[RMDB]
RNA sequence: GGGAACGACUCGAGUAGAGUCGAAAACAGUGAUGUCACAUUAGUAGCUUGAAAUUGGCUGUGAUGGGAAUAUUUACACCUUACAAGUCAGACUGCUACAAUUCAGAGCUUUUGUUUUGAAGAGCUACCAUCCUCAAUUCUUCGGAAUUGAGGAUGGAAAAGAAACAACAACAACAAC
Reactivity to DMS in 0.01 (KOAc 150mM, MgCl2 10mM, bicine 150mM(pH8.5), 24C), signal-to-noise 2, nucleotides 027 to 126: c070a050g000u000g010a130u010g010u030c070a080c070a080u010u010a120g040u000a000g040c020u000u010g000a030a090a090u000u000g000g000c010u000g010u010g000a020u010g050g010g000a100a130u000a170u000u000u070a300c140a150c030c020u010u000a030c040a050a080g030u000c000a020g010a140c090u000g000c000u000a040c030a040a100u010u000c120a100g020a080g000c010u000u000u000u000g000u010u000u010u000g000a080a070g000a040g000c020u010a200
Reactivity to 2A3 in 0.01 (KOAc 150mM, MgCl2 10mM, bicine 150mM(pH8.5), 24C), signal-to-noise 3, nucleotides 027 to 126: c020a020g010u030g120a070u140g070u230c080a040c000a120u070u090a040g000u000a000g010c020u070u090g060a110a130a080u170u020g020g000c010u020g020u020g060a080u200g050g000g090a150a010u100a170u200u140u150a110c040a030c040c000u020u060a000c020a110a040g020u020c000a000g000a060c020u040g000c000u000a010c020a000a040u110u110c060a030g010a040g080c000u110u120u090u190g080u080u140u070u100g120a060a040g000a010g050c010u020a050